[RMDB]
RNA sequence: GGGAACGACUCGAGUAGAGUCGAAAAGGUGGAAACAACUGAAGCUUCAACGCCUUUUUUUCCAUAUCUUCUUUAGCACCGGGCUAGGGAGUAAGCCCGUGGAACCUUAGUUUUGUUCCCUCGGGACUUACUUGUGGUUCCUGUGGUGCACUCCUGACAUCCUACGUCAGUUCGCUGACGUAGGAUGAAAAGAAACAACAACAACAAC
Reactivity to 2A3 in 0.01 (KOAc 150mM, MgCl2 10mM, bicine 150mM(pH8.5), 24C), signal-to-noise 3, nucleotides 027 to 156: g020g000u010g030g060a090a000a030c030a020a080c120u140g070a170a030g080c040u170u140c120a080a050c020g010c000c020u020u030u030u000u000u050u050c050c010a050u060a130u120c050u140u020c000u030u160u080a040g010c020a000c060c120g070g080g000c060u020a030g020g220g030a020g010u030a040a010g000c000c000c000g000u010g000g000a000a000c000c010u060u040a070g030u070u260u170u130g020u050u030c020c000c030u060c070g040g000g090a140c020u000u010a000c010u020u040g080u090g060g010u140u300c030c020u080g150u140g020g030u040g030c030a010c020u040c000c010u020g020a000
This 207-nucleotide RNA was probed chemically with 2A3. The reactions ran in a buffer of 150 mM KOAc, 10 mM MgCl2 and 150 mM bicine (pH 8.5), at 24 C. The data come from the RNA Mapping Database (RMDB), library VIROID.